[RMDB]
RNA sequence: GGGAACGACUCGAGUAGAGUCGAAAAGACAUACUAUCAGUCUCUAAGGAUUGAAAGUAAGUUGAUAAUGACCAAGUCAAGGUCCAGGCUGGCAACAGAGCAGACAGAGCGAGGCACAUCGAUGGGUAUGAAGUUUCGAUUUCGAUCGAAACUUCAUAAAAGAAACAACAACAACAAC
Reactivity to 2A3 in 0.01 (KOAc 150mM, MgCl2 10mM, bicine 150mM(pH8.5), 24C), signal-to-noise 2, nucleotides 027 to 126: g040a000c000a020u010a000c000u050a050u040c000a000g070u000c030u030c100u200a070a050g130g020a010u000u000g010a030a000a000g000u000a090a000g020u060u030g050a130u120a270a120u130g050a040c020c000a030a060g110u100c020a040a060g010g000u040c030c030a050g020g020c010u060g000g020c020a000a000c020a030g080a040g050c020a020g050a100c000a040g060a000g080c030g000a050g050g070c020a010c010a080u060c100g100a120u180g040g030g000u030
Reactivity to DMS in 0.01 (KOAc 150mM, MgCl2 10mM, bicine 150mM(pH8.5), 24C), signal-to-noise 1, nucleotides 027 to 126: g010a030c000a070u000a010c000u000a120u000c000a010g000u030c000u000c110u090a110a170g000g000a000u000u010g000a040a060a050g020u000a020a110g070u050u010g000a260u020a070a090u030g000a130c000c030a040a220g000u000c000a110a050g000g000u030c000c060a090g000g030c090u000g010g000c020a020a110c060a130g010a000g000c160a000g020a030c030a060g000a000g050c000g020a050g040g000c000a060c110a040u000c130g000a120u000g000g000g080u010